RNA sequence: GGGAACGACUCGAGUAGAGUCGAAAAGACACAUGCCCUCGGAGAUCCGCUCGUAGUUGGCAAAGCGCCGCCGUAGGUCCCUAGCGAGGCGCGCGUUCCCGUCGGAGUACACUCCCAGGGUCUUGAUGGUAGAUAACGAACCUCCCGUCAGCGAGGCAGGUCUUCCAAAAUUCGUUUUGGAAGACCUAAAAGAAACAACAACAACAAC
Reactivity to 2A3 in 0.01 (KOAc 150mM, MgCl2 10mM, bicine 150mM(pH8.5), 24C), signal-to-noise 2, nucleotides 027 to 156: g100a000c020a000c000a020u040g000c000c000c010u010c000g030g000a020g010a080u010c010c030g040c070u050c070g160u150a180g050u110u240g070g000c060a100a150a140g000c010g000c000c010g190c170c000g020u020a020g030g060u050c020c010c020u030a060g030c000g060a010g000g000c000g030c000g000c040g020u090u130c000c020c000g040u050c000g050g000a030g010u030a000c050a040c080u000c020c000c010a000g000g000g000u030c090u030u050g030a060u020g010g030u050a100g010a220u190a180a000c010g000a000a010c000c010u010c000c020c000g150u210c060a020g020c030g160a010g000g020c010
Reactivity to DMS in 0.01 (KOAc 150mM, MgCl2 10mM, bicine 150mM(pH8.5), 24C), signal-to-noise 1, nucleotides 027 to 156: g000a160c060a080c060a080u000g000c000c000c000u000c040g060g010a080g000a110u000c030c030g000c120u000c010g020u000a050g030u000u000g000g040c100a100a060a270g040c050g000c000c000g010c050c010g070u000a090g000g010u010c040c030c010u000a190g040c040g000a110g040g040c030g040c070g000c070g000u000u000c020c020c000g020u000c060g000g030a060g040u000a030c050a150c000u000c020c020c000a070g030g010g020u000c050u000u000g000a110u000g020g000u000a030g040a220u000a070a040c080g000a120a090c010c000u020c020c000c040g000u020c150a080g000c020g000a010g120g070c040